[RMDB]
RNA sequence: GGGAACGACUCGAGUAGAGUCGAAAACGGUAGUACAGAUAGCCCGCUAUCAUGAGUGCGACAAUAAGGACACAGGGUAUGACCGGCGCAAUAAUGGUUGCGUCUUUGGUAUUGGUGUAUUUUUCGGUAAUUGGUAGUAACGAUAUAAAUGGGUUAACGCGGUACUGUAAUUCGUUACAGUACCGCGAAAAGAAACAACAACAACAAC
Reactivity to 2A3 in 0.01 (KOAc 150mM, MgCl2 10mM, bicine 150mM(pH8.5), 24C), signal-to-noise 2, nucleotides 027 to 156: c010g030g050u060a020g030u060a050c060a110g080a000u090a020g030c020c000c010g080c010u030a010u030c000a000u010g090a000g140u150g080c000g080a010c020a060a100u140a210a060g060g030a020c040a000c010a070g080g030g100u130a070u170g010a040c000c130g000g030c040g000c040a000a110u160a160a230u260g240g010u050u030g010c000g000u030c000u100u050u100g070g000u050a050u040u080g020g010u020g000u010a120u080u070u020u000u020c020g010g010u040a030a110u030u090g090g000u050a010g050u040a050a160c080g000a030u010a000u060a130a040a080u100g000g000g020u000u000a050a000

The record gives the reactivity of an RNA of 207 nucleotides to 2A3. It was measured as part of the RMDB library OK3TST. 2A3 adducts were read by reverse transcription with SuperScript II with manganese. The reactions ran in a buffer of 150 mM KOAc, 10 mM MgCl2 and 150 mM bicine (pH 8.5), at 24 C. For 2A3, 705 sequencing reads were counted.